An RNA of 177 nucleotides, treated with 2A3 and DMS and read out base by base. For 2A3 the reverse transcriptase was SuperScript II with manganese.
RNA sequence: GGGAACGACUCGAGUAGAGUCGAAAAGAUAUGGAUCCACGGUACGAGCGAAGAACUCGGAAACGAGGGAGCUCAGUAUUGGAUCCUAAGUCAAAGUCUGAGUUACGCUUCGGCGUAACUCAGACAAUCCAUAUAGGUCGUUCGCGACCUAUAUGGAAAAAGAAACAACAACAACAAC
Reactivity to 2A3 in 0.01 (KOAc 150mM, MgCl2 10mM, bicine 150mM(pH8.5), 24C), signal-to-noise 3, nucleotides 027 to 126: g020a040u090a050u170g000g000a000u010c040c030a050c210g060g020u040a000c020g000a000g010c000g090a300a030g010a090a070c000u010c020g020g070a110a050a000c010g010a010g000g000g030a000g020c020u020c090a070g000u020a030u050u090g000g000a000u010c000c000u020a120a040g050u030c090a180a100a020g010u000c000u010g020a000g000u000u000a010c000g000c010u040u170c300g040g000c010g010u000a000a010c000u010c010a000g000a000c000a000a000
Reactivity to DMS in 0.01 (KOAc 150mM, MgCl2 10mM, bicine 150mM(pH8.5), 24C), signal-to-noise 4, nucleotides 027 to 126: g000a040u000a300u010g000g000a010u000c000c010a060c300g010g000u020a020c010g000a020g010c010g000a130a170g000a130a230c000u000c000g000g010a140a130a110c010g010a010g010g000g000a060g040c000u010c000a050g040u000a020u000u000g000g000a020u000c000c000u000a010a060g000u000c040a060a060a120g000u000c000u010g000a010g010u000u000a000c010g000c010u000u010c130g010g000c000g020u000a000a010c000u000c030a000g000a020c010a030a020